Structure probing data (2A3 and DMS) for a 177-nucleotide construct. The RNA was probed in 150 mM KOAc, 10 mM MgCl2 and 150 mM bicine (pH 8.5) at 24 C.
RNA sequence: GGGAACGACUCGAGUAGAGUCGAAAAGGUUAUUUUUCACAUUAUGCGUCAGAUAGAAUACAACUAUUAGGAACAACGGAACUAUCGUUUUACAAUUUAUUACCAGAUAAGGAUCGCGCAGGUCGUAACAUCCAGGAGUCUUCGGACUCCUGGAUGUAAAAGAAACAACAACAACAAC
Reactivity to 2A3 in 0.01 (KOAc 150mM, MgCl2 10mM, bicine 150mM(pH8.5), 24C), signal-to-noise 1, nucleotides 027 to 126: g110g000u010u020a010u000u100u020u030u020c170a300c190a300u240u240a170u080g000c070g000u140c090a000g000a020u000a000g010a000a300u170a040c220a000a000c140u100a080u120u100a160g010g010a120a000c000a080a000c060g230g000a020a040c040u020a000u210c000g060u000u000u040u080a070c120a190a090u200u040u000a020u000u300a280c060c000a000g000a000u230a000a180g040g000a000u000c000g000c000g000c240a000g120g000u000c000g100u000a100
Reactivity to DMS in 0.01 (KOAc 150mM, MgCl2 10mM, bicine 150mM(pH8.5), 24C), signal-to-noise 1, nucleotides 027 to 126: g000g010u000u000a010u000u020u000u000u000c070a110c060a210u000u000a080u000g030c110g090u000c030a180g000a030u000a030g000a100a150u090a190c280a010a070c060u000a030u000u000a070g000g000a010a090c250a060a000c150g060g040a070a100c190u040a040u030c000g000u000u000u000u000a000c090a030a000u040u080u050a080u000u000a090c090c150a130g000a040u040a050a000g000g000a070u050c030g060c160g170c010a000g000g000u060c020g000u040a110